[RMDB]
RNA sequence: GGGAACGACUCGAGUAGAGUCGAAAACAUUACGCGAUAUGAGGCCCGCUUCGACGCAGCAGGUUUCACGGUUGACCGGGACACGCUCAACCGGACAUGGCGUUGCUCAGCUUCAGUGUGCGAGUUACGCACCAGUGAUGUUCGCAUCACUGGUGCGAAAAGAAACAACAACAACAAC
Reactivity to 2A3 in 0.01 (KOAc 150mM, MgCl2 10mM, bicine 150mM(pH8.5), 24C), signal-to-noise 2, nucleotides 027 to 126: c020a030u120u270a130c060g070c050g110a100u060a090u300g030a040g000g030c010c020c000g030c060u090u070c030g050a050c030g020c010a030g070c010a010g070g070u070u110u110c110a110c020g000g010u000u020g010a010c000c010g000g000g150a090c150a000c170g020c000u000c000a000a000c000c000g030g030a020c000a030u100g060g000c000g000u010u030g000c000u020c080a060g010c010u070u070c020a080g060u030g020u060g190c020g000a020g020u020u100a050
Reactivity to DMS in 0.01 (KOAc 150mM, MgCl2 10mM, bicine 150mM(pH8.5), 24C), signal-to-noise 1, nucleotides 027 to 126: c070a080u000u010a120c130g010c060g020a120u010a110u000g000a050g000g010c030c030c090g020c090u000u000c060g030a050c110g030c160a090g060c100a080g000g000u000u000u000c020a090c040g020g000u000u000g010a020c070c000g010g000g050a180c200a080c000g010c300u000c030a020a030c000c000g010g000a050c150a070u000g000g010c010g010u000u000g000c060u010c160a120g040c010u010u000c070a080g040u000g010u000g030c030g010a150g010u000u000a180
The record gives the reactivity of an RNA of 177 nucleotides to 2A3 and DMS. The RNA was probed in 150 mM KOAc, 10 mM MgCl2 and 150 mM bicine (pH 8.5) at 24 C. For 2A3 the reverse transcriptase was SuperScript II with manganese. In probing experiments dimethyl sulfate is read out at A N1 and C N3, which are open when not base-paired. For DMS, 1,255 sequencing reads were counted. For DMS the reverse transcriptase was MarathonRT. The data come from the RNA Mapping Database (RMDB), library OK2TST.